[RMDB]
RNA sequence: GGGAACGACUCGAGUAGAGUCGAAAACUCACAAGAGAGCAUCAAAACAGAACAGACCACACUGCCCAGAUCCUCCGUAUAUGUUCCCGCAUGUGCAUACAUUGAUUUGGACAGCAGCAUACGGGUACCGUAGUGUCCAAUUCGUUGGACACUACGGAAAAGAAACAACAACAACAAC
Reactivity to DMS in 0.01 (KOAc 150mM, MgCl2 10mM, bicine 150mM(pH8.5), 24C), signal-to-noise 2, nucleotides 027 to 126: c010u000c020a130c180a090a120g000a100g000a050g040c050a010u000c050a060a080a080a070c110a050g000a120a050c100a100g000a080c030c020a070c050a050c040u000g000c020c010c020a100g000a070u000c050c030u000c010c060g000u000a050u000a070u010g010u010u000c010c010c010g020c040a020u000g000u000g000c020a090u030a110c060a030u000u000g000a160u000u000u000g010g000a080c170a080g020c030a060g020c060a020u000a030c020g000g000g010u000a130
Reactivity to 2A3 in 0.01 (KOAc 150mM, MgCl2 10mM, bicine 150mM(pH8.5), 24C), signal-to-noise 2, nucleotides 027 to 126: c010u000c020a050c060a050a060g090a000g000a010g130c010a010u040c040a060a110a070a050c020a020g090a060a050c030a040g060a030c000c000a020c010a030c030u020g030c020c010c000a010g000a060u040c010c010u070c020c020g030u020a030u000a040u150g050u030u040c000c010c000g020c000a040u040g000u060g020c020a010u030a110c020a040u080u120g060a160u230u040u030g050g010a020c020a030g040c000a010g090c010a030u040a040c020g020g030g000u050a070